[RMDB]
RNA sequence: GGGAACGACUCGAGUAGAGUCGAAAAAGCACGAAACGGAAGGGCCUGUUCUUCGACUCGCACAAGGAUGUGAUGAAGCCGCUGUCCGAUGGGUCGGACAUCAACAGCUCGCCGGAGAACUACGUGGGUGCAACAAGUUAUUCGUAACUUGUUGCACAAAAGAAACAACAACAACAAC
Reactivity to 2A3 in 0.01 (KOAc 150mM, MgCl2 10mM, bicine 150mM(pH8.5), 24C), signal-to-noise 4, nucleotides 027 to 126: a010g090c020a010c010g050a050a050a000c020g020g040a050a090g260g000g000c060c050u010g030u050u000c030u020u020c000g030a030c030u020c020g040c030a080c020a190a100g120g010a120u050g070u030g120a130u080g070a040a010g030c070c040g000c080u020g030u000c000c010g040a070u140g000g030g110u030c000g000g000a010c010a040u110c020a010a040c000a010g000c000u020c020g020c000c000g050g040a130g020a080a030c080u130a040c070g030u050g030g110
Reactivity to DMS in 0.01 (KOAc 150mM, MgCl2 10mM, bicine 150mM(pH8.5), 24C), signal-to-noise 5, nucleotides 027 to 126: a100g020c030a020c030g020a100a110a090c040g010g020a080a100g030g000g010c110c060u010g020u000u000c100u000u000c020g000a040c020u000c040g030c100a060c110a110a150g010g010a110u000g010u000g010a080u010g020a100a100g040c080c020g030c160u000g020u010c010c000g000a090u010g010g010g020u010c000g010g020a030c070a040u010c090a040a050c030a060g020c000u000c030g000c000c020g000g000a070g000a050a070c100u010a100c050g020u000g000g010